Structure probing data (DMS and 2A3) for a 177-nucleotide construct. It was measured as part of the RMDB library OK1LIB. 2A3 adducts were read by reverse transcription with SuperScript II with manganese. The 2A3 profile rests on 886 reads. The RNA was probed in 150 mM KOAc, 10 mM MgCl2 and 150 mM bicine (pH 8.5) at 24 C.
[RMDB]
RNA sequence: GGGAACGACUCGAGUAGAGUCGAAAACGUCAGAUGACGAAGUCGGUCCAUCUGCGGUAACAGACCGACAUAGAGUUCGAAGCAGAACGAACAACCGCAGACACACGAUUGGAGUGUGAAUGAGAGAAGGACUCCUAAUCUUCGGAUUAGGAGUCCUAAAAGAAACAACAACAACAAC
Reactivity to DMS in 0.01 (KOAc 150mM, MgCl2 10mM, bicine 150mM(pH8.5), 24C), signal-to-noise 1, nucleotides 027 to 126: c050g060u000c000a040g050a020u000g000a000c010g010a070a080g080u010c000g000g020u020c010c130a250u000c000u000g000c000g000g000u000a120a030c160a090g000a000c060c000g000a000c000a070u080a000g000a140g000u000u000c000g050a270a110g000c130a080g070a140a220c030g010a120a000c040a220a000c010c000g000c000a000g000a110c060a000c000a010c080g030a260u000u000g050g000a170g000u000g000u000g000a010a040u050g000a120g030a080g000a220
Reactivity to 2A3 in 0.01 (KOAc 150mM, MgCl2 10mM, bicine 150mM(pH8.5), 24C), signal-to-noise 1, nucleotides 027 to 126: c000g000u000c020a030g040a300u050g000a300c000g000a020a000g000u000c000g000g000u000c000c040a130u010c030u000g000c040g000g000u000a010a000c000a050g060a000c000c000g000a000c000a000u030a000g140a000g020u000u000c000g010a190a050g170c120a000g070a050a030c030g000a000a000c000a000a000c030c000g000c000a000g000a000c010a000c000a000c000g150a020u130u130g300g000a280g000u010g000u000g000a020a180u190g050a150g000a020g000a180